[RMDB]
RNA sequence: GGGAACGACUCGAGUAGAGUCGAAAAGAAAACCGCGCAAGUCACACAAUCGCGUGGAUAUGGCACGCACGCUUCUGCCGGGCAACAUACAUGUCCGAUUGUGUCAAUGCGCGGAAAAGAAAGAAAAACGGAUAGGUGAUUUCGAUCACCUAUCCGUAAAAGAAACAACAACAACAAC
Reactivity to DMS in 0.01 (KOAc 150mM, MgCl2 10mM, bicine 150mM(pH8.5), 24C), signal-to-noise 1, nucleotides 027 to 126: g000a270a060a190a040c010c110g000c000g000c000a000a000g000u110c300a000c000a000c070a000a000u100c020g010c030g030u030g050g000a110u030a030u000g020g000c230a210c060g020c010a060c170g000c130u000u020c090u000g030c210c010g000g050g010c010a110a150c060a010u020a000c220a010u000g050u000c100c020g000a000u000u000g060u030g000u000c070a090a180u000g000c040g000c000g000g000a000a000a000a070g020a040a110a020g000a050a090a080a120
Reactivity to 2A3 in 0.01 (KOAc 150mM, MgCl2 10mM, bicine 150mM(pH8.5), 24C), signal-to-noise 2, nucleotides 027 to 126: g090a020a100a000a000c000c000g000c000g000c000a000a040g050u190c060a010c000a000c020a000a000u000c020g010c050g090u010g030g010a060u010a000u110g080g000c070a000c060g060c000a020c010g030c070u240u030c120u200g190c150c000g020g020g020c000a080a030c000a030u200a050c010a000u040g060u090c020c000g000a020u000u000g000u000g000u020c000a010a140u080g010c010g010c000g000g010a000a000a000a000g000a000a000a000g060a000a000a030a000